[RMDB]
RNA sequence: GGGAACGACUCGAGUAGAGUCGAAAAGUUGGGUAUUGAACCGGCAGAGCCGAUCGCCAACGUCAUCUUGCAGACGAUCAGCGAUCGCAUCCAGUAGUUAGCCGAGGACUGGAAAGCAGCAGCGGCGAAGCCCACGAUCUUUCGAGAUCGUGGGCUUAAAAGAAACAACAACAACAAC
Reactivity to DMS in 0.01 (KOAc 150mM, MgCl2 10mM, bicine 150mM(pH8.5), 24C), signal-to-noise 2, nucleotides 027 to 126: g020u000u000g000g020g050u000a150u000u000g020a130a080c030c010g000g040c050a100g000a120g000c140c010g010a000u010c040g010c010c020a100a230c030g010u000c020a070u000c160u020u000g010c170a140g000a020c010g000a050u000c280a100g020c000g000a010u000c000g020c060a100u010c010c000a070g000u000a060g000u020u000a210g020c050c030g030a080g000g000a080c000u000g040g050a060a180a130g010c080a040g000c050a120g010c030g000g000c080g030
Structure probing data (DMS) for a 177-nucleotide construct. For DMS the reverse transcriptase was MarathonRT. Source: RMDB library OK2TRN, as collected in RNAgym. The DMS profile rests on 1,022 reads.